[RMDB]
RNA sequence: GGGAACGACUCGAGUAGAGUCGAAAAACUUCUCUUGAGGAUUCAGUAGAGUCUAAUUUUCUUCAUUAUUCAAUUUGGAUCCUGUUAAGUGAGACAGGCAUUCACUGACAAGAAGGAACAUUUAAAUACGUUAGUUCCAGUUCGCUGGAACUAACGUAAAAGAAACAACAACAACAAC
Reactivity to 2A3 in 0.01 (KOAc 150mM, MgCl2 10mM, bicine 150mM(pH8.5), 24C), signal-to-noise 2, nucleotides 027 to 126: a010c040u090u000c050u000c000u010u090g020a010g060g000a030u000u020c070a020g070u040a000g140a030g090u000c000u020a030a150u000u080u140u110c040u010u000c100a150u000u090a020u110u010c060a070a040u050u040u040g000g000a000u000c000c000u050g000u020u080a130a200g050u030g120a060g060a070c100a000g070g000c000a000u020u030c000a000c020u010g040a000c010a140a040g000a010a010g080g000a010a010c010a000u180u160u210a090a250a100u070